[RMDB]
RNA sequence: GGGAACGACUCGAGUAGAGUCGAAAAUACUAUGUUUUAAUAACAAUCCUCUCAUUUUAGUGCUUUAGUUUUUUCAUUAGUAAAAGAUCUCUAUCUCCUAAAACACUAAAAUAUUGUGAAAUUAACUGAAAAGUUGUAAACAUAGCAGUCAGGGGAAUAUCAUACCCAUAUUCGUAUGGGUAUGAUAAAAAGAAACAACAACAACAAC
Reactivity to 2A3 in 0.01 (KOAc 150mM, MgCl2 10mM, bicine 150mM(pH8.5), 24C), signal-to-noise 2, nucleotides 027 to 156: u150a020c010u010a030u050g000u000u030u060u100a190a200u090a100a040c020a050a070u010c000c010u010c010u010c010a000u000u000u000u020a000g000u000g000c000u000u000u010a030g050u080u030u130u050u110u150c110a170u140u260a010g050u120a020a050a230a020g030a080u030c090u000c050u290a060u060c020u030c050c010u020a010a060a000a010c000a000c000u000a010a020a020a010u020a000u000u050g020u010g030a030a030a040u140u040a140a090c020u030g060a020a040a100a120g020u030u020g010u040a000a000a000c000a000u010a010g000c020a000g140u150c040a010g030g000g070g040a000a040
Reactivity to DMS in 0.01 (KOAc 150mM, MgCl2 10mM, bicine 150mM(pH8.5), 24C), signal-to-noise 1, nucleotides 027 to 156: u000a020c000u000a010u010g000u000u000u000u010a060a170u010a090a100c030a120a240u000c010c010u000c000u010c160a020u000u000u000u000a010g020u000g010c010u000u000u000a010g010u020u000u020u000u000u010c040a290u000u000a130g030u000a060a040a040a060g000a050u010c180u010c120u000a080u000c000u000c040c000u000a000a000a020a020c010a020c000u000a000a010a010a010u010a020u010u010g040u020g020a100a060a070u000u040a040a220c070u000g000a080a080a140a140g010u010u000g000u000a040a020a040c000a030u000a000g030c010a060g010u000c080a100g000g060g000g000a070a200